[RMDB]
RNA sequence: GGGAACGACUCGAGUAGAGUCGAAAAGUCAAUGCAAGACCUUCGACGCGGACGCCGACGGGUACGUACGCAGCGAAGGCGCUGGCGUGGUGGUGCUCAAGCGGUUGUCCGACGCGCAGCGCGACGGCCCAUGCUCCUGAUUCGUCAGGAGCAUGGGAAAAGAAACAACAACAACAAC
Reactivity to DMS in 0.01 (KOAc 150mM, MgCl2 10mM, bicine 150mM(pH8.5), 24C), signal-to-noise 2, nucleotides 027 to 126: g040u000c070a040a140u020g000c020a150a070g020a120c080c030u000u000c000g000a060c050g060c000g000g010a030c000g010c040c000g000a110c220g000g000g010u000a000c040g000u010a030c020g010c000a030g000c000g010a230a190g040g010c020g130c010u000g020g020c000g070u000g000g060u000g030g000u000g000c020u000c000a080a140g000c030g000g020u020u050g010u000c020c030g000a000c050g040c010g020c150a100g000c020g000c030g000a110c040g000g020
Reactivity to 2A3 in 0.01 (KOAc 150mM, MgCl2 10mM, bicine 150mM(pH8.5), 24C), signal-to-noise 5, nucleotides 027 to 126: g060u060c020a020a070u240g090c080a140a060g040a140c010c020u030u030c040g110a140c020g010c000g030g010a000c000g020c020c000g080a160c120g040g000g010u040a020c030g030u020a030c010g000c010a010g010c020g080a120a180g130g040c020g000c010u060g040g080c010g030u030g030g210u110g050g020u020g000c000u040c050a220a090g070c050g070g020u210u300g010u020c020c000g010a060c000g020c000g000c020a040g030c030g000c030g050a090c030g040g000